[RMDB]
RNA sequence: GGGAACGACUCGAGUAGAGUCGAAAAACUCAGAUCCUUCUGUCACUGAGCCAACAAGAAGCCAUUGAGAAACACCUGGAUUUUGACAGCCGCUGUGCUCUGCUAGCACUGUUUGCACAGGCCACGCGUGACGAGGAUUUUUCGAAAUCCUCGUCACAAAAGAAACAACAACAACAAC
Reactivity to 2A3 in 0.01 (KOAc 150mM, MgCl2 10mM, bicine 150mM(pH8.5), 24C), signal-to-noise 1, nucleotides 027 to 126: a000c060u060c030a060g020a190u070c020c000u050u070c060u080g040u070c010a020c080u010g020a010g000c000c000a040a060c050a060a090g110a090a000g020c030c000a020u070u190g050a120g090a100a150a020c020a020c000c020u070g000g120a120u090u100u030u090g090a030c030a010g020c000c020g010c010u040g050u040g040c010u010c030u090g060c050u070a010g000c000a030c080u010g010u050u140u100g000c000a000c020a030g000g000c020c020a060c030g060c060
Reactivity to DMS in 0.01 (KOAc 150mM, MgCl2 10mM, bicine 150mM(pH8.5), 24C), signal-to-noise 1, nucleotides 027 to 126: a060c050u010c020a090g000a080u010c040c010u000u000c010u000g010u000c000a100c070u000g010a080g000c080c090a090a100c080a070a080g010a140a050g030c050c030a080u000u010g000a110g000a100a030a060c120a070c080c040u000g010g010a110u000u000u000u000g010a040c070a060g040c120c020g000c050u010g000u000g010c000u000c120u000g030c090u000a070g020c060a090c080u010g010u010u000u000g010c030a000c060a090g000g000c030c030a040c090g000c140
Structure probing data (2A3 and DMS) for a 177-nucleotide construct. DMS adducts were read by reverse transcription with MarathonRT. It was measured as part of the RMDB library OK2TRN. The 2A3 profile rests on 1,012 reads.